Chemical mapping of a 177-nucleotide RNA with DMS and 2A3. As a SHAPE reagent, 2A3 marks flexible, mostly unpaired nucleotides at the ribose 2'-OH.

[RMDB]
RNA sequence: GGGAACGACUCGAGUAGAGUCGAAAAUGUUACAAAACGAGGGGACAAAUGAGUGGAUCACAAACCAUGACAACUUUCUACAGUCCCCCAUGGGAUCCUGGCUCCAGCUGGUGUCAAGUGUGGGCUCAGAACCGGUGAGAUUCGUCUCACCGGUUCUAAAAGAAACAACAACAACAAC
Reactivity to DMS in 0.01 (KOAc 150mM, MgCl2 10mM, bicine 150mM(pH8.5), 24C), signal-to-noise 2, nucleotides 027 to 126: u050g000u000u010a100c150a130a050a110a100c060g000a100g040g000g000g050a020c000a090a240a080u040g000a300g010u010g040g000a100u050c120a040c240a150a260a170c070c050a140u000g040a150c150a080a080c050u050u050u030c180u010a120c150a020g000u000c000c020c000c050c000a020u010g000g010g000a000u030c030c050u010g000g000c000u000c050c020a090g010c010u030g060g030u010g030u000c050a000a030g010u000g140u000g000g000g070c000u020c100
Reactivity to 2A3 in 0.01 (KOAc 150mM, MgCl2 10mM, bicine 150mM(pH8.5), 24C), signal-to-noise 1, nucleotides 027 to 126: u280g010u000u090a010c060a010a100a000a000c060g210a230g030g000g000g000a060c050a040a070a090u220g000a050g090u020g020g110a070u120c000a000c000a200a190a130c050c000a050u110g000a000c020a030a000c040u000u150u010c050u080a050c110a130g000u000c070c000c000c000c000a000u000g000g040g000a050u040c000c000u000g060g000c000u040c060c000a140g010c090u040g000g000u090g010u060c070a030a030g000u040g000u000g260g000g000c000u000c050